Annotation: Chemical mapping of a 170-nucleotide RNA with DMS and 2A3. Reactivities are rounded to 0.1 and cut off at 0 and 3. It was measured as part of the RMDB library 15KLIB. For 2A3 the reverse transcriptase was SuperScript II with manganese.
RNA sequence: GGGAACGACUCGAGUAGAGUCGAAAAGAGGGUCGCCCAGGAAUGGCGGGACCCACUCGACUGGGGUCCGCGUUCCAUCCUUUCUUACCUUGUGGCCGGCAUGGUCCCAGCCUCCUCGCUGGCGCCGAAACGGGCUGAUUCGUCAGCCCGAAAAGAAACAACAACAACAAC
Reactivity to DMS in 0.01 (KOAc 150mM, MgCl2 10mM, bicine 150mM(pH8.5), 24C), signal-to-noise 2, nucleotides 027 to 129: g020a080g000g000g000u000c100g000c000c000c000a000g030g040a060a040u030g050g040c000g000g020g030a040c050c010c010a030c000u060c140g040a120c230u000g000g030g000g020u000c020c000g040c000g010u000u060c000c040a080u000c110c080u020u060u040c010u000u000a120c190c110u020u060g020u070g060g050c010c010g030g000c050a000u000g040g020u070c140c010c010a110g000c000c000u020c000c000u020c120g020c030u030g020g050c000g060c060c050g010a030a090a090
Reactivity to 2A3 in 0.01 (KOAc 150mM, MgCl2 10mM, bicine 150mM(pH8.5), 24C), signal-to-noise 3, nucleotides 027 to 129: g080a030g020g030g010u140c080g040c010c000c000a010g020g040a020a030u080g300g080c030g000g020g010a010c000c030c000a020c020u220c070g160a170c090u060g010g000g000g030u010c000c000g020c000g000u020u000c030c000a050u040c010c000u070u200u050c020u060u060a110c000c010u040u080g050u170g070g000c010c000g010g030c050a090u090g020g010u070c010c010c010a020g000c000c010u020c010c030u050c030g000c000u020g010g000c020g000c010c010g030a060a040a020